This 207-nucleotide RNA was probed chemically with 2A3 and DMS. Values cover nucleotides 27 to 156. The reactions ran in a buffer of 150 mM KOAc, 10 mM MgCl2 and 150 mM bicine (pH 8.5), at 24 C.
RNA sequence: GGGAACGACUCGAGUAGAGUCGAAAAGGACCAGCUGAGGGGUCCGACAUAGCCUCAGCAUCUAGCCUGUCACUCACCAGGCGAAUCAGGUGAGUGUUGAUGCUUUUGCAUCUUAAUCUGACUGAGUCGUAGCAGUCUCAUGAACUAUGACAUUAGAGCGGUAUAGCAUAUUCGUAUGCUAUACCGCAAAAGAAACAACAACAACAAC
Reactivity to 2A3 in 0.01 (KOAc 150mM, MgCl2 10mM, bicine 150mM(pH8.5), 24C), signal-to-noise 5, nucleotides 027 to 156: g000g000a000c000c000a000g010c000u010g000a000g000g010g010g000u000c000c000g010a020c030a080u130a020g040c000c000u000c000a000g000c000a020u050c030u040a020g020c010c000u040g060u120c000a000c000u010c000a010c010c000a010g000g030c030g020a060a070u120c060a050g020g020u000g010a020g000u010g000u030u080g000a010u000g000c040u060u200u200u300g020c010a000u000c000u020u150a160a110u070c140u100g010a010c000u000g000a000g030u000c000g000u000a000g000c000a010g010u010c070u040c210a120u170g020a030a020c000u010a010u000g010a010c010a010u050u150a060g080a010
Reactivity to DMS in 0.01 (KOAc 150mM, MgCl2 10mM, bicine 150mM(pH8.5), 24C), signal-to-noise 1, nucleotides 027 to 156: g000g020a020c010c000a190g030c110u000g020a070g030g020g020g030u010c030c020g040a080c070a170u020a170g030c030c010u000c000a020g110c030a070u000c100u000a130g000c000c000u020g010u000c030a040c010u000c030a060c110c020a110g040g080c000g030a100a060u010c100a130g000g010u000g010a050g000u000g020u000u000g040a100u020g000c000u000u000u000u000g010c030a070u000c020u010u010a100a220u020c040u000g010a060c050u000g010a060g040u000c010g020u010a080g010c000a110g010u010c080u000c150a070u010g050a110a020c000u000a000u000g010a030c030a200u020u000a090g010a230